[RMDB]
RNA sequence: GGGAACGACUCGAGUAGAGUCGAAAAGAAAGCGCGAGUCGUAUGAGGCCGGAAAUGCGACGACAGCGAGAUCCUGAAACCGGCCUAAGGAUCGAGCUGGAGGCUGCGAAGCAGUCGAGCGCGAAAAGGGAUAUUCGUAGUUCGCUACGAAUAUCCCAAAAGAAACAACAACAACAAC
Reactivity to 2A3 in 0.01 (KOAc 150mM, MgCl2 10mM, bicine 150mM(pH8.5), 24C), signal-to-noise 1, nucleotides 027 to 126: g040a000a030a010g020c000g000c000g010a030g000u050c010g020u050a090u130g030a000g020g130c000c000g000g060a000a100a080u190g010c000g000a030c000g000a010c020a000g000c000g020a000g000a020u000c020c000u060g050a170a000a030c020c010g040g000c000c010u030a080a160g000g000a010u020c010g000a000g000c000u030g000g000a060g020g000c000u000g000c000g180a140a050g000c000a000g000u010c000g040a020g010c010g000c000g060a020a020a030a000
Reactivity to DMS in 0.01 (KOAc 150mM, MgCl2 10mM, bicine 150mM(pH8.5), 24C), signal-to-noise 1, nucleotides 027 to 126: g040a070a160a060g000c000g000c000g000a160g000u000c000g000u060a000u000g070a060g000g000c010c000g040g010a290a090a010u030g040c000g000a030c000g000a130c000a000g000c000g000a190g030a000u000c000c000u020g000a080a070a070c000c000g000g000c000c010u000a160a020g000g000a020u000c000g030a300g000c020u000g000g020a180g040g000c000u000g000c000g000a130a170g010c010a020g000u000c000g000a130g000c020g010c020g000a020a080a160a110